[RMDB]
RNA sequence: GGGAACGACUCGAGUAGAGUCGAAAAAUUCUAUGUUAUGGGCACUGAAACUAAAAGAAACUGUGGAAGGAUUGGUACCUUAGAGAAAUGAAAAAGCAAAAACAUCAGAAAUUAUGGUGUAUUUCUGUAAAGUUAGUGACACUGAGUGUGCCCACCAACCCCUAAAAUACUUCGGUAUUUUAGGGGUAAAAGAAACAACAACAACAAC
Reactivity to DMS in 0.01 (KOAc 150mM, MgCl2 10mM, bicine 150mM(pH8.5), 24C), signal-to-noise 2, nucleotides 027 to 156: a090u010u040c020u000a070u000g020u000u000a090u010g020g000g030c020a020c040u010g020a180a090a140c070u000a050a020a060a250g000a150a090a090c070u010g020u000g000g000a100a110g030g000a180u000u030g010g010u000a020c060c010u000u000a040g000a090g010a030a080a070u010g010a100a060a090a100a180g040c060a000a030a080a140a020c070a060u000c030a070g030a170a060a090u000u040a050u000g010g040u010g030u000a090u010u010u000c040u010g030u000a010a090a140g020u000u000a040g050u000g020a050c020a060c060u010g090a160g000u020g010u000g000c000c000c010a060c030c020a040
Reactivity to 2A3 in 0.01 (KOAc 150mM, MgCl2 10mM, bicine 150mM(pH8.5), 24C), signal-to-noise 1, nucleotides 027 to 156: a010u070u000c000u000a010u180g010u010u150a120u120g010g000g020c050a030c050u100g040a090a040a000c030u180a230a050a080a010g100a150a190a040c020u060g040u030g040g070a070a030g030g000a060u090u090g030g060u080a100c000c010u040u010a000g000a000g000a030a100a000u040g040a000a030a080a020a000g000c000a000a030a130a000a050c010a010u220c030a010g120a020a090a030u200u260a040u200g000g000u010g000u000a120u000u000u000c010u000g030u070a040a040a110g050u000u080a000g010u000g120a020c010a000c130u010g000a000g040u090g010u000g040c010c020c000a050c010c000a000